[RMDB]
RNA sequence: GGGAACGACUCGAGUAGAGUCGAAAACUCCAUUGCUUCGGCAAUGGAGAAACAGGACGUGAGACCGAAUCGGAGGUAGGUCCAACUACCUUCUCACAAAAAAAACGCUUAGGUUCGCCUAAGCGAACAAGUCCAUAUUGUUCGCAAUAUGGACUUGAAAAGAAACAACAACAACAAC
Reactivity to 2A3 in 0.01 (KOAc 150mM, MgCl2 10mM, bicine 150mM(pH8.5), 24C), signal-to-noise 5, nucleotides 027 to 126: c000u000c010c000a000u000u000g010c000u030u040c200g130g000c000a000a000u010g000g000a000g010a000a000a000c050a020g030g060a020c060g050u040g030a020g020a030c020c060g080a110a120u180c120g140g020a010g010g010u010a000g010g040u070c070c020a060a100c000u010a010c010c000u040u000c020u000c010a030c010a010a060a010a010a000a010a000a030c010g000c010u010u000a010g010g000u030u040c040g100c000c000u000a000a000g000c000g000a000a010
Reactivity to DMS in 0.01 (KOAc 150mM, MgCl2 10mM, bicine 150mM(pH8.5), 24C), signal-to-noise 6, nucleotides 027 to 126: c000u000c000c000a000u000u000g010c000u000u000c200g030g000c000a000a000u000g000g000a010g000a010a060a100c150a090g000g000a090c100g000u010g000a030g000a240c060c030g000a110a110u000c110g010g010a020g000g000u000a000g010g010u010c160c150a100a180c010u000a010c000c000u000u000c000u000c040a020c040a000a000a000a040a050a070a090a180c010g010c000u000u000a010g010g010u000u000c250g020c000c000u000a010a000g010c000g000a040a060
Structure probing data (2A3 and DMS) for a 177-nucleotide construct. Conditions: 150 mM KOAc, 10 mM MgCl2 and 150 mM bicine (pH 8.5), 24 C. It was measured as part of the RMDB library M2PK50. The DMS profile rests on 8,303 reads.